[RMDB]
RNA sequence: GGGAACGACUCGAGUAGAGUCGAAAAUAGGCUCCCACCCGCGCCAAAAGACCUUUCGCGCCGAUAUGUUGACAGGCAUUCUCCGCCAGUAUCGCUACAUUGAGGCUAUGGGUGUAGGUGCCGGGGGUGCGUAUCUGCAAUUCGUUGCAGAUACGCAAAAAGAAACAACAACAACAAC
Reactivity to DMS in 0.01 (KOAc 150mM, MgCl2 10mM, bicine 150mM(pH8.5), 24C), signal-to-noise 2, nucleotides 027 to 126: u010a050g020g030c090u000c010c000c000a220c040c010c000g070c170g030c010c030a060a080a100a120g010a150c050c010u000u000u020c200g030c240g000c020c020g000a180u000a000u010g000u000u010g040a100c070a090g010g010c010a130u000u000c120u020c130c110g010c020c010a090g040u000a160u000c130g030c090u020a020c030a000u000u000g010a300g000g040c020u010a080u000g000g000g010u000g000u000a090g010g010u010g000c130c020g020g000g000g000g020
Reactivity to 2A3 in 0.01 (KOAc 150mM, MgCl2 10mM, bicine 150mM(pH8.5), 24C), signal-to-noise 1, nucleotides 027 to 126: u090a030g070g000c020u010c000c000c000a050c010c000c000g010c000g000c020c000a140a090a030a010g160a040c010c020u050u160u080c300g020c100g000c030c000g030a000u010a000u070g010u000u010g010a120c050a080g000g000c010a050u200u080c070u030c050c060g000c000c000a010g030u050a050u250c030g010c050u020a010c000a010u030u040g020a000g100g000c020u000a050u060g040g010g000u000g140u070a050g000g010u000g000c070c050g000g010g000g000g070

This 177-nucleotide RNA was probed chemically with DMS and 2A3. Values cover nucleotides 27 to 126. The RNA was probed in 150 mM KOAc, 10 mM MgCl2 and 150 mM bicine (pH 8.5) at 24 C. For DMS, 1,228 sequencing reads were counted. The 2A3 profile rests on 997 reads. As a SHAPE reagent, 2A3 marks flexible, mostly unpaired nucleotides at the ribose 2'-OH.